[RMDB]
RNA sequence: GGGAACGACUCGAGUAGAGUCGAAAACGGGUGACGUGGCCUGACCGCCGAUUAUUAGGGCGUCCACCAUAUCCAGCGCCGCCAGGUGGCUCCCGAACGCGCGAUCGAAAUGCUCCGCCCGCCGCCCGCUGGCAGUGGGGUUCGCCCCACUGCCAGCAAAAGAAACAACAACAACAAC
Reactivity to 2A3 in 0.01 (KOAc 150mM, MgCl2 10mM, bicine 150mM(pH8.5), 24C), signal-to-noise 1, nucleotides 027 to 126: c010g000g000g000u000g080a020c050g080u150g070g080c040c080u020g000a060c000c000g100c000c060g050a090u000u010a120u170u160a210g000g010g030c020g050u120c000c000a010c000c010a100u040a060u160c100c100a050g050c050g060c000c080g040c000c000a010g000g010u030g010g010c000u000c000c000c000g050a100a010c030g000c030g000c010g080a000u020c000g070a080a000a060u260g000c000u000c030c000g000c000c000c000g000c000c000g000c000c010c000
The record gives the reactivity of an RNA of 177 nucleotides to 2A3. The reactions ran in a buffer of 150 mM KOAc, 10 mM MgCl2 and 150 mM bicine (pH 8.5), at 24 C. It was measured as part of the RMDB library OK1LIB.